[RMDB]
Description
Conditions: 150 mM KOAc, 10 mM MgCl2 and 150 mM bicine (pH 8.5), 24 C. An RNA of 177 nucleotides, treated with 2A3 and read out base by base. For 2A3 the reverse transcriptase was SuperScript II with manganese.
RNA sequence: GGGAACGACUCGAGUAGAGUCGAAAACGUGUCAACUGACUCUGUCCGUCUCAGCUGUGGCGUUGCUCUGGGCGGCGUUCUGCUGGCCGAGAUUUUCGUGACAGCUGAGACCCAGAGACAUGAUCACUCCUAACCGCCCAUUCGUGGGCGGUUAGGAAAAAGAAACAACAACAACAAC
Reactivity to 2A3 in 0.01 (KOAc 150mM, MgCl2 10mM, bicine 150mM(pH8.5), 24C), signal-to-noise 3, nucleotides 027 to 126: c040g010u050g000u060c050a030a070c140u040g030a040c000u000c000u010g030u030c050c030g010u000c000u000c000a000g020c000u020g000u040g060g000c000g040u010u030g020c020u010c050u170g010g050g010c020g000g000c000g060u280u130c130u250g000c000u070g110g080c000c020g040a000g000a050u090u140u000u010c000g000u000g200a000c000a000g000c000u000g020a000g000a000c000c000c000a010g010a000g040a020c000a020u070g020a010u110c010a000c030
Description:
Values cover nucleotides 27 to 126.